[RMDB]
Source: RMDB library OK3TST, as collected in RNAgym. Chemical mapping of a 207-nucleotide RNA with DMS and 2A3. For DMS, 34,770 sequencing reads were counted. For 2A3, 10,167 sequencing reads were counted. High DMS reactivity at an A or C suggests that its Watson-Crick edge is free. Values are in units of 0.01, from 0 to 300, in steps of 10. Values cover nucleotides 27 to 156.
RNA sequence: GGGAACGACUCGAGUAGAGUCGAAAACGGCCAGCCUCAGUAAUUUAACGUGUCGAAUGAAAGGUAUUAAACCACAUAGUAACAUGAUGGGUAUUGACAAUAUACACUGCGUGCUAAGGAAAAGCUGCUUGAUUAGUGUUCCAGUGGUCAUCUGGAAAAAUAGGACUAAUUUCGAUUAGUCCUAUUUAAAAGAAACAACAACAACAAC
Reactivity to DMS in 0.01 (KOAc 150mM, MgCl2 10mM, bicine 150mM(pH8.5), 24C), signal-to-noise 8, nucleotides 027 to 156: c050g020g010c030c020a150g000c030c030u000c020a100g020u010a070a110u000u000u000a070a110c070g020u000g020u010c030g010a130a100u010g010a070a080a100g020g020u000a100u000u000a070a090a120c020c020a110c060a090u000a110g020u000a080a070c060a050u000g010a080u010g000g020g020u000a070u000u000g000a120c070a090a110u000a110u000a070c040a060c030u010g020c060g020u000g010c030u000a060a090g020g000a070a040a080a110g020c020u000g010c030u000u000g020a130u000u000a090g020u000g010u000u000c010c010a090g020u000g010g020u000c070a100u000c010u000g020g010a060a050
Reactivity to 2A3 in 0.01 (KOAc 150mM, MgCl2 10mM, bicine 150mM(pH8.5), 24C), signal-to-noise 9, nucleotides 027 to 156: c030g040g010c020c010a010g020c020c000u060c030a030g060u120a100a160u080u110u140a120a060c080g030u050g050u110c050g060a060a050u110g060a130a080a070g040g010u090a090u120u230a180a140a030c020c010a020c010a040u090a040g110u110a090a040c040a090u100g040a110u060g050g000g030u070a090u040u100g020a020c020a050a010u060a000u020a130c040a000c040u040g010c020g060u050g000c030u040a030a060g060g020a060a090a010a020g010c020u030g010c020u050u040g040a080u080u120a030g040u030g040u110u050c020c010a010g010u030g040g050u050c020a050u020c050u020g000g000a050a070